[RMDB]
Annotation: An RNA of 177 nucleotides, treated with 2A3 and DMS and read out base by base. 2A3 adducts were read by reverse transcription with SuperScript II with manganese. Reactivities are rounded to 0.1 and cut off at 0 and 3.
RNA sequence: GGGAACGACUCGAGUAGAGUCGAAAAAUGUCAAAGCUUGAUACGCACCUGAAUCGGCAGUUACAUACAGACCAAUAGUAUAUUAGUACAUAUGCCGGUUUGGGUUCGUAUCAAACUAUGAUAUACAAAUUAUUUUCCUUUUCGAAGGAAAAUAAUUAAAAGAAACAACAACAACAAC
Reactivity to 2A3 in 0.01 (KOAc 150mM, MgCl2 10mM, bicine 150mM(pH8.5), 24C), signal-to-noise 9, nucleotides 027 to 126: a000u050g000u000c010a040a020a040g000c000u000u000g000a000u000a000c000g000c010a000c010c000u000g010a000a000u000c000g000g000c010a020g020u080u050a030c020a020u050a020c020a040g260a130c060c080a120a150u100a110g060u010a030u010a020u160u180a050g030u020a020c040a080u200a110u190g000c000c000g000g000u000u000u000g010g000g000u000u000c000g000u000a000u000c000a000a000a000c000u000a030u020g000a000u020a000u010a060c040a010
Reactivity to DMS in 0.01 (KOAc 150mM, MgCl2 10mM, bicine 150mM(pH8.5), 24C), signal-to-noise 7, nucleotides 027 to 126: a030u000g000u000c000a020a100a030g010c040u000u000g000a010u000a000c000g010c090a010c000c000u010g010a000a000u000c010g000g020c000a060g020u020u000a020c040a080u000a030c070a130g020a160c230c250a090a140u030a090g010u000a030u000a130u020u010a120g010u000a010c160a080u020a300u010g010c000c010g010g000u000u000u010g000g000g000u000u000c000g010u000a000u000c000a000a000a000c000u000a050u000g010a020u000a010u010a090c100a070